Structure probing data (DMS and 2A3) for a 177-nucleotide construct. It was measured as part of the RMDB library RFM100. The DMS profile rests on 1,867 reads. For DMS the reverse transcriptase was MarathonRT. The reactions ran in a buffer of 150 mM KOAc, 10 mM MgCl2 and 150 mM bicine (pH 8.5), at 24 C.
[RMDB]
RNA sequence: GGGAACGACUCGAGUAGAGUCGAAAAGUACCCAUUCCAUGGCGGCGGGAACGGGUAUAAUCGAAAUCGAAAGAAGCGGACCCCGCGCAGGUGGCUAACCAGAUACGCGGGCGAUGCGGAUUUUCAGCUAGCUUUACGAGUUCGCUCGUAAAGCUAGAAAAGAAACAACAACAACAAC
Reactivity to DMS in 0.01 (KOAc 150mM, MgCl2 10mM, bicine 150mM(pH8.5), 24C), signal-to-noise 3, nucleotides 027 to 126: g020u000a050c020c000c000a230u000u020c010c010a030u000g000g000c050g020g000c100g000g040g040a010a010c110g010g040g030u000a000u020a010a210u050c140g000a000a050a130u040c060g000a000a010a010g000a300a070g030c000g010g000a300c300c000c000c020g020c060g090c080a130g070g000u020g000g010c160u000a060a060c000c030a130g020a160u000a090c010g000c110g000g000g040c030g030a130u050g000c000g000g000a170u040u000u020u000c010a120g020
Reactivity to 2A3 in 0.01 (KOAc 150mM, MgCl2 10mM, bicine 150mM(pH8.5), 24C), signal-to-noise 4, nucleotides 027 to 126: g030u020a020c010c000c000a030u020u000c010c010a060u100g100g010c030g010g000c010g020g010g000a020a020c020g000g000g050u030a030u080a020a050u090c090g030a080a020a080u100c040g010a020a030a030g030a050a000g000c000g010g020a050c000c000c000c000g000c000g000c020a070g010g050u070g070g090c090u100a090a070c010c000a000g020a130u160a090c000g000c000g000g010g000c010g000a010u030g000c000g000g000a000u050u020u000u030c010a000g030